[RMDB]
RNA sequence: GGGAACGACUCGAGUAGAGUCGAAAAGCGUAUCUUCGGAUACGCACAUCCUAAGUCGAUCGACUAUUCGUUUGUCAGCGUGCCAUCGGAAACGAUGGUACGCUUGGAUUUAACGAACGAAUCGAUCGAUAUGGACUAUCGCCUUCUUCGGAAGGCGGGAAUUAAGAGAUUUCGAUCUCUUAAUUCCAAAAGAAACAACAACAACAAC
Reactivity to 2A3 in 0.01 (KOAc 150mM, MgCl2 10mM, bicine 150mM(pH8.5), 24C), signal-to-noise 5, nucleotides 027 to 156: g010c010g000u000a010u000c010u050u120c300g110g000a010u000a000c000g010c000a010c020a010u030c000c000u040a160a030g030u010c000g000a010u000c000g010a020c050u080a050u030u010c000g020u000u000u010g040u010c010a000g000c010g000u000g010c000c000a010u000c010g040g010a070a050a070c010g000a000u000g000g010u000a000c000g000c000u000u010g000g000a010u120u090u230a030a000c000g000a000a010c020g070a070a250u000c010g010a010u000c000g010a000u000a050u030g030g000a010c060u150a130u300c040g000c010c000u000u000c000u050u060c200g110g000a010a000g000g000c000g000
Reactivity to DMS in 0.01 (KOAc 150mM, MgCl2 10mM, bicine 150mM(pH8.5), 24C), signal-to-noise 2, nucleotides 027 to 156: g020c020g050u000a010u000c000u010u000c300g060g000a020u000a000c010g030c000a040c090a080u000c020c010u010a070a240g020u010c000g000a010u010c010g010a050c030u020a130u010u000c000g010u000u000u000g010u010c010a030g010c000g020u000g000c000c000a000u010c000g010g000a190a130a230c000g000a020u000g010g020u000a000c020g020c020u000u000g030g000a010u000u000u000a000a010c000g020a010a010c040g030a040a030u010c000g000a010u000c000g010a010u000a140u000g010g000a060c060u000a130u000c030g010c000c010u000u000c000u000u000c280g030g010a010a000g000g030c000g010
Structure probing data (2A3 and DMS) for a 207-nucleotide construct. The data come from the RNA Mapping Database (RMDB), library RNAMAK. For 2A3, 6,770 sequencing reads were counted. For DMS, 4,781 sequencing reads were counted. The RNA was probed in 150 mM KOAc, 10 mM MgCl2 and 150 mM bicine (pH 8.5) at 24 C.